RNA sequence: GGGAACGACUCGAGUAGAGUCGAAAAACGCCACGGGUUGUGUAGAUGUGUCUUUCGCCAAAGGCAUUUAAUCCGGCGACGUAACGUUUAUCUUCGACAGGGGCAAAAGGUUCACCAACCAACGGUAAUACAGACCUAAAUUCGUUUAGGUCUGUAUAAAAGAAACAACAACAACAAC
Reactivity to 2A3 in 0.01 (KOAc 150mM, MgCl2 10mM, bicine 150mM(pH8.5), 24C), signal-to-noise 4, nucleotides 027 to 126: a010c060g030c010c020a030c040g040g030g010u040u060g050u030g060u140a060g010a170u070g050u020g010u020c010u020u080u060c070g050c060c030a050a040a010g010g040c030a020u130u130u110a040a040u010c010c010g020g020c020g020a040c030g020u040a020a010c000g010u040u040u070a100u060c100u100u060c030g040a040c010a060g020g000g000g020c010a040a040a070a060g050g020u030u060c040a040c110c020a020a030c020c020a060a030c060g080g010u040a020
Reactivity to DMS in 0.01 (KOAc 150mM, MgCl2 10mM, bicine 150mM(pH8.5), 24C), signal-to-noise 7, nucleotides 027 to 126: a070c080g010c020c020a070c070g000g000g030u000u000g010u020g020u000a100g000a070u000g010u000g010u000c020u000u000u010c230g030c200c130a050a080a040g000g000c050a040u010u010u010a070a090u000c020c020g000g010c050g010a040c140g020u000a050a060c070g010u000u000u000a080u020c070u000u000c030g010a060c080a090g010g000g000g020c100a050a030a100a070g000g010u000u000c040a080c060c030a060a110c080c060a050a080c130g010g010u000a080